[RMDB]
RNA sequence: GGGAACGACUCGAGUAGAGUCGAAAAUCGUGUCGCUCACGAGGAGCGAAGUGUCUAGUCGAAUAGGCCAAUUCAGGACAGUGAGGGUGCUCAAGGUACAGCAACAAUGAGUCUCCAGCAUCAGGAAUCCGAUCUGGACGUUCGCGUCUAGAUCGGAAAAAGAAACAACAACAACAAC
Reactivity to DMS in 0.01 (KOAc 150mM, MgCl2 10mM, bicine 150mM(pH8.5), 24C), signal-to-noise 4, nucleotides 027 to 126: u000c040g000u020g000u000c030g010c020u000c020a100c130g040a140g020g020a040g030c050g000a040a070g010u000g010u010c000u000a060g000u000c110g010a110a090u020a100g010g000c010c040a040a120u010u000c040a070g030g000a040c080a070g010u000g000a060g000g010g000u020g030c020u010c020a040a070g000g010u000a050c070a090g010c150a090a040c060a050a090u020g000a050g000u000c040u000c010c000a090g000c070a040u000c030a030g000g010a110a080
Reactivity to 2A3 in 0.01 (KOAc 150mM, MgCl2 10mM, bicine 150mM(pH8.5), 24C), signal-to-noise 1, nucleotides 027 to 126: u120c010g000u050g030u020c010g000c000u030c000a100c040g160a070g110g040a000g000c000g010a090a000g010u010g000u010c050u060a030g000u040c020g020a050a040u000a010g020g000c000c000a000a000u070u020c050a030g070g000a050c000a000g010u000g050a040g000g000g020u040g000c000u000c000a030a030g050g000u030a080c050a020g000c000a050a020c000a000a130u040g010a000g020u020c040u000c010c000a000g070c000a000u010c000a000g040g040a020a040